[RMDB]
RNA sequence: GGGAACGACUCGAGUAGAGUCGAAAAUUAAAGUACGUAGAAGCGGCGUGAAGCAUGUAGAAAGCUUUGCGAGCAUAUCGAGCUACAUGUGAGCGAAAGCGGUUACGUACAACCAUAUGCAAAAAAACGAGUUAGAUUUGUUCGCAAAUCUAACUCGAAAAGAAACAACAACAACAAC
Reactivity to 2A3 in 0.01 (KOAc 150mM, MgCl2 10mM, bicine 150mM(pH8.5), 24C), signal-to-noise 2, nucleotides 027 to 126: u070u030a070a010a030g000u020a000c000g000u000a000g010a060a010g020c010g140g010c010g010u000g030a040a010g000c000a000u000g000u020a010g060a200a130a050g030c050u120u120u220g140c140g050a020g030c030a040u120a050u180c040g010a010g040c000u000a000c000a000u000g130u140g010a030g000c010g020a080a070a030g020c000g000g010u020u000a000c000g000u000a010c000a000a000c020c000a030u110a120u280g140c080a030a050a000a020a000a040a100
Reactivity to DMS in 0.01 (KOAc 150mM, MgCl2 10mM, bicine 150mM(pH8.5), 24C), signal-to-noise 1, nucleotides 027 to 126: u000u000a060a230a180g010u000a010c010g000u000a000g000a120a130g040c000g010g010c020g000u000g010a150a230g010c000a010u020g000u020a010g000a060a120a230g010c070u000u000u000g000c090g000a060g000c090a000u060a040u000c110g010a160g000c000u030a040c040a030u010g000u010g000a260g010c000g000a090a040a130g000c000g000g030u000u000a010c000g000u010a000c030a100a130c000c000a050u000a050u020g030c090a000a030a180a050a100a010a120
Structure probing data (2A3 and DMS) for a 177-nucleotide construct. Values are in units of 0.01, from 0 to 300, in steps of 10. It was measured as part of the RMDB library M2PK90. In probing experiments dimethyl sulfate is read out at A N1 and C N3, which are open when not base-paired. 2A3 adducts were read by reverse transcription with SuperScript II with manganese.